[RMDB]
RNA sequence: GGGAACGACUCGAGUAGAGUCGAAAAAAAAAAAAGAUAUGGAGUAGCAGAUGAGUAUACGAAGAACGUGCUCGGAAACGAGCACGGGAGUAUACUUCAUCUUCCCUACUCCUAAGUCAAAAAAAAAUCAUGUAGUUAUGUUCGCAUAACUACAUGAAAAAGAAACAACAACAACAAC
Reactivity to 2A3 in 0.01 (KOAc 150mM, MgCl2 10mM, bicine 150mM(pH8.5), 24C), signal-to-noise 1, nucleotides 027 to 126: a040a000a020a000a070a040a150a020g050a070u130a010u170g020g000a000g030u010a010g030c300a010g130a020u010g010a010g010u010a020u000a010c050g200a300a040g040a070a000c020g000u010g000c000u000c010g010g020a130a130a030c040g000a000g070c060a000c020g000g030g000a030g000u000a010u000a000c000u110u080c000a030u000c020u010u020c000c000c000u000a000c020u000c000c000u010a040a020g020u000c020a010a000a000a050a060a000a030a000a180
Reactivity to DMS in 0.01 (KOAc 150mM, MgCl2 10mM, bicine 150mM(pH8.5), 24C), signal-to-noise 2, nucleotides 027 to 126: a000a000a000a010a080a060a220a130g000a020u000a300u000g000g000a030g000u000a000g120c160a020g020a030u010g000a050g000u000a000u000a000c000g030a120a080g000a070a150c010g010u000g000c000u000c000g000g000a050a060a130c000g000a000g000c000a000c000g010g000g000a080g000u000a010u000a000c000u000u000c010a000u000c010u000u020c130c220c000u000a010c010u000c000c000u000a000a060g000u010c020a000a010a010a000a010a100a060a110a190
The record gives the reactivity of an RNA of 177 nucleotides to 2A3 and DMS. Conditions: 150 mM KOAc, 10 mM MgCl2 and 150 mM bicine (pH 8.5), 24 C. The data come from the RNA Mapping Database (RMDB), library TTRDES. The 2A3 profile rests on 2,365 reads. DMS adducts were read by reverse transcription with MarathonRT.